Structure probing data (2A3 and DMS) for a 207-nucleotide construct. For DMS, 14,386 sequencing reads were counted.
RNA sequence: GGGAACGACUCGAGUAGAGUCGAAAAUGUCGGCAUCGUCAUUACCUAUAUACCAAAUACCACCUGCGUUAAUCACACGUAAUUGCGGCCAUAAUGUAUACAAUUUGUCGGGUUGAUGAUAUGCGCAAUAUAUAGGAUUGACGCCUGCAAUACGCUCCAUAGAAAGGUUAUUCGUAACCUUUCUAUGAAAAGAAACAACAACAACAAC
Reactivity to 2A3 in 0.01 (KOAc 150mM, MgCl2 10mM, bicine 150mM(pH8.5), 24C), signal-to-noise 9, nucleotides 027 to 156: u080g020u040c030g020g030c030a090u080c100g010u010c010a010u020u090a280c000c010u000a000u000a010u020a030c060c090a100a170a050u210a170c070c090a080c040c080u050g000c010g010u040u130a100a030u040c020a020c010a010c080g080u090a050a080u070u170g090c040g010g030c030c020a070u120a150a070u160g100u110a090u050a160c090a100a100u030u050u080g070u050c040g030g050g030u060u070g050a160u010g010a010u050a050u150g020c020g000c000a020a000u010a000u000a000u010a020g000g000a010u000u010g000a000c010g000c000c010u020g000c000a000a020u050a120c050g020c040u000c020
Reactivity to DMS in 0.01 (KOAc 150mM, MgCl2 10mM, bicine 150mM(pH8.5), 24C), signal-to-noise 5, nucleotides 027 to 156: u000g020u000c100g020g030c040a130u000c030g060u010c020a050u000u000a130c010c020u000a050u000a040u000a060c030c030a100a150a130u010a080c060c020a050c020c050u020g000c030g030u000u000a070a090u010c080a110c080a060c080g000u010a020a050u000u000g020c000g010g030c110c110a110u000a100a080u010g010u000a110u010a050c030a040a060u000u000u000g010u000c040g020g020g020u000u000g020a050u010g020a080u010a040u000g010c150g000c040a070a060u000a030u000a040u000a040g000g000a140u000u010g010a040c020g020c100c070u000g020c030a070a100u000a060c050g020c040u010c040
Background
The RNA was probed in 150 mM KOAc, 10 mM MgCl2 and 150 mM bicine (pH 8.5) at 24 C. 2A3 adducts were read by reverse transcription with SuperScript II with manganese. Source: RMDB library OK3TST, as collected in RNAgym.